[RMDB]
RNA sequence: GGGAACGACUCGAGUAGAGUCGAAAAGAUAUGGAGUCAGGGAAUGCAGUGACAUGCGUAGAGAUCUCAAUCGGAAACGAUUGAGGUGUAGCAUGUCACUGAACUACAUUCAUUGACUCCUAAGUCACAUAUUACUGAUGUUCGCAUCAGUAAUAUGAAAAGAAACAACAACAACAAC
Reactivity to DMS in 0.01 (KOAc 150mM, MgCl2 10mM, bicine 150mM(pH8.5), 24C), signal-to-noise 7, nucleotides 027 to 126: g010a030u000a090u010g000g000a030g010u000c000a020g010g000g010a030a010u000g010c010a020g010u000g010a020c000a010u000g010c000g010u000a180g010a090g000a010u000c000u000c000a010a010u000c000g000g000a030a030a070c000g010a020u000u000g010a010g010g010u000g010u000a030g020c000a010u000g000u000c000a010c000u000g010a060a100c300u010a300c010a010u000u010c000a060u010u000g010a010c000u000c000c000u000a000a060g000u000c010a300
Reactivity to 2A3 in 0.01 (KOAc 150mM, MgCl2 10mM, bicine 150mM(pH8.5), 24C), signal-to-noise 3, nucleotides 027 to 126: g010a000u030a020u070g010g000a000g010u010c010a010g030g010g060a010a010u030g020c000a000g010u000g010a000c000a000u010g000c010g300u300a060g010a010g010a110u000c010u000c010a000a010u000c000g010g000a020a020a010c000g000a000u000u010g000a000g000g010u010g010u010a020g000c000a000u000g000u000c000a000c000u000g000a000a000c010u120a020c000a010u000u000c010a020u000u020g000a010c000u010c000c000u000a000a000g000u000c000a000